[RMDB]
RNA sequence: GGGAACGACUCGAGUAGAGUCGAAAACGUGCUGCUGCCCGCGCGCGCGGACAAGACGCCGGUCGAGGGCGGGUCGCUUCCGUUGCGUCGGGUCGGGUGGCCGGACGGCGACGAAGCUGGUCGGGUCAAAAGAACUUCCUUUCGAGGAAGUUCUUUUAAAAGAAACAACAACAACAAC
Reactivity to DMS in 0.01 (KOAc 150mM, MgCl2 10mM, bicine 150mM(pH8.5), 24C), signal-to-noise 5, nucleotides 027 to 126: c030g010u010g010c010u000g010c010u000g000c010c000c020g020c070g000c020g000c020g030c010g000g000a030c270a130a150g010a080c010g020c030c000g020g010u030c140g010a150g020g000g000c010g000g000g000u000c090g000c300u020u000c010c020g000u010u050g040c020g010u020c050g020g010g030u020c040g000g010g000u010g010g010c010c040g000g010a020c010g000g010c030g000a280c020g000a150a090g020c010u000g000g000u000c000g000g000g000u000c040
Reactivity to 2A3 in 0.01 (KOAc 150mM, MgCl2 10mM, bicine 150mM(pH8.5), 24C), signal-to-noise 6, nucleotides 027 to 126: c010g010u110g030c010u010g000c000u020g000c000c000c000g000c020g000c010g000c000g010c000g020g020a010c040a090a090g040a020c050g110c120c000g050g190u200c130g090a210g040g090g050c060g000g010g010u040c030g010c080u040u010c020c010g020u040u300g020c020g030u090c110g080g010g050u050c000g020g000g010u050g010g010c000c000g020g020a000c010g030g050c020g010a020c020g040a050a020g030c020u040g010g110u040c000g000g010g020u010c010

This 177-nucleotide RNA was probed chemically with DMS and 2A3.
For 2A3 the reverse transcriptase was SuperScript II with manganese.
The RNA was probed in 150 mM KOAc, 10 mM MgCl2 and 150 mM bicine (pH 8.5) at 24 C.
The DMS profile rests on 15,875 reads.
For DMS the reverse transcriptase was MarathonRT.
It was measured as part of the RMDB library OK1LIB.